An RNA of 177 nucleotides, treated with 2A3 and read out base by base.
The RNA was probed in 150 mM KOAc, 10 mM MgCl2 and 150 mM bicine (pH 8.5) at 24 C.
The data come from the RNA Mapping Database (RMDB), library OK1LIB.
For 2A3 the reverse transcriptase was SuperScript II with manganese.
For 2A3, 699 sequencing reads were counted.
[RMDB]
RNA sequence: GGGAACGACUCGAGUAGAGUCGAAAAGAGCAGGUGUUUGACCGAGCGCGCGGCCUCGGCAUGGCUCAUGCCGAGCAAGUCGAAGUGCCAAUCGGCGGGCGGGUCUUGGUCUUCGUCCAGCGGCAGCGAGGGUGUGUUCCUUCGGGAACACACCCUCAAAAGAAACAACAACAACAAC
Reactivity to 2A3 in 0.01 (KOAc 150mM, MgCl2 10mM, bicine 150mM(pH8.5), 24C), signal-to-noise 1, nucleotides 027 to 126: g160a020g040c100a000g090g060u020g000u050u120u080g080a100c000c000g010a000g000c100g000c010g000c020g060g030c010c000u010c000g050g000c000a000u050g280g150c060u070c220a040u050g000c000c040g000a000g040c080a070a000g040u010c000g010a050a080g020u070g100c090c000a120a160u040c070g000g000c000g050g070g000c000g060g000g000u040c010u020u030g000g000u030c020u050u070c050g060u010c020c030a000g040c030g070g000c000a040g040c040